[RMDB]
Chemical mapping of a 177-nucleotide RNA with 2A3 and DMS.
RNA sequence: GGGAACGACUCGAGUAGAGUCGAAAAGUCAUCAAUCGCGUGCGGUGGCCGCGACCCUGGUCCUCGGAGAGGUCCGGGCCUGACCUUUUGGUUGGCGCUAACGCCCGUCGGGCUGUUUUGGCGCUGUUAAAUAUCCACAUUUCGAUGUGGAUAUUUAAAAAGAAACAACAACAACAAC
Reactivity to 2A3 in 0.01 (KOAc 150mM, MgCl2 10mM, bicine 150mM(pH8.5), 24C), signal-to-noise 9, nucleotides 027 to 126: g040u030c020a070u050c040a120a120u040c030g010c020g060u190g040c040g070g220u150g160g010c010c010g000c020g020a020c010c000c000u020g000g010u030c010c010u030c090g150g070a180g010a020g100g040u000c000c010g000g000g020c000c020u030g010a030c010c000u050u110u070u110g150g000u060u120g030g000c010g000c010u010a020a010c010g020c010c000c040g250u160c170g000g010g000c050u120g060u030u060u050u070g010g000c000g000c000u000g020u000
Reactivity to DMS in 0.01 (KOAc 150mM, MgCl2 10mM, bicine 150mM(pH8.5), 24C), signal-to-noise 9, nucleotides 027 to 126: g000u000c050a070u020c110a090a150u010c030g010c020g020u030g030c020g010g030u030g010g010c040c020g010c020g000a060c150c010c010u010g020g010u000c010c000u000c020g020g020a140g000a050g000g000u000c000c010g010g000g000c250c080u000g000a040c030c050u010u000u010u010g010g010u010u010g010g010c000g010c000u000a020a020c040g000c000c000c010g010u030c190g010g000g010c020u020g020u010u000u020u010g010g000c010g010c000u000g000u010

DMS adducts were read by reverse transcription with MarathonRT. The reactions ran in a buffer of 150 mM KOAc, 10 mM MgCl2 and 150 mM bicine (pH 8.5), at 24 C. The data come from the RNA Mapping Database (RMDB), libraries RFM100 and RFMREP.